RNA sequence: GGGAACGACUCGAGUAGAGUCGAAAAAGGCCUUCUGGUGAUGUUUCUGGCCACCCAGGAGGUCUUGAGGAAGAGGUGGACGGCCAGACAAAAGGCGAAACUCUUUGGUUCGCCAAAGAGUUUCGCCCAAGAAGGUGAUGUUCGCAUCACCUUCUUGAAAAGAAACAACAACAACAAC
Reactivity to DMS in 0.01 (KOAc 150mM, MgCl2 10mM, bicine 150mM(pH8.5), 24C), signal-to-noise 3, nucleotides 027 to 126: a010g000g010c000c000u000u000c010u000g000g010u000g000a130u000g010u010u020u010c010u000g000g020c040c010a210c090c000c010a020g000g010a010g000g010u000c010u000u010g010a110g000g010a080a050g010a070g000g020u010g000g000a090c170g030g010c010c020a010g010a060c300a040a050a070a050g010g010c010g010a010a010a010c000u000c010u000u000u000g010g000u000u010c260g010c000c000a000a000a020g010a020g010u000u000u000c000g000c010c010
Reactivity to 2A3 in 0.01 (KOAc 150mM, MgCl2 10mM, bicine 150mM(pH8.5), 24C), signal-to-noise 3, nucleotides 027 to 126: a000g000g000c000c010u010u010c010u020g020g080u130g070a150u080g100u060u190u060c010u010g000g000c000c000a000c020c000c000a000g010g010a000g020g000u000c000u020u080g010a030g030g030a050a030g020a020g070g090u160g050g060a060c060g000g020c020c000a000g010a000c010a010a120a000a000g010g020c010g000a010a000a000c010u000c010u000u020u000g040g030u050u110c190g000c030c000a010a000a000g010a000g010u010u000u000c000g000c000c000